[RMDB]
RNA sequence: GGGAACGACUCGAGUAGAGUCGAAAAAGCGCGUUCGCGCGCUGUUAAGGGGUCUGAUUCCACUCCAACCUACCCACCGAACUACGACUGAAGCCUCCACGGUCGCGAGGGUUGGGAGAAUCAGACGGAGGCACCCAAUGACACCGUUCGCGGUGAACAAAGAAACGAAUUUCGAUUCGUUUCUUUGAAAAGAAACAACAACAACAAC
Reactivity to 2A3 in 0.01 (KOAc 150mM, MgCl2 10mM, bicine 150mM(pH8.5), 24C), signal-to-noise 5, nucleotides 027 to 156: a010g030c030g000c040g030u090u140c160g010c000g020c000g030c140u020g050u060u160a240a190g080g010g060g000u000c000u000g000a020u030u000c030c050a110c120u120c070c020a100a140c020c010u070a030c020c010c050a110c070c120g070a140a080c090u140a110c300g020a000c000u020g010a080a010g020c000c000u000c000c010a040c010g000g020u040c030g030c050g080a130g010g010g000u020u070g070g020g010a160g010a010a000u000c000a000g010a000c010g000g000a000g000g000c000a020c000c000c000a030a080u140g030a030c000a010c020c000g020u080u070c230g010c010g110g000u050g010a040a030
Reactivity to DMS in 0.01 (KOAc 150mM, MgCl2 10mM, bicine 150mM(pH8.5), 24C), signal-to-noise 3, nucleotides 027 to 156: a020g020c000g050c000g040u010u010c300g050c030g040c010g030c000u000g000u000u000a090a090g050g020g020g030u000c010u000g020a060u000u000c010c060a110c100u010c110c090a100a180c030c000u000a130c030c020c010a250c100c240g000a140a150c030u000a030c000g010a040c010u010g000a040a110g000c010c000u000c000c000a300c030g000g000u000c020g000c020g010a160g010g000g010u010u000g000g050g000a070g000a040a050u000c010a040g010a030c020g020g010a060g050g050c020a100c010c010c020a100a110u000g010a270c010a050c020c000g020u000u000c210g010c040g040g000u000g010a080a220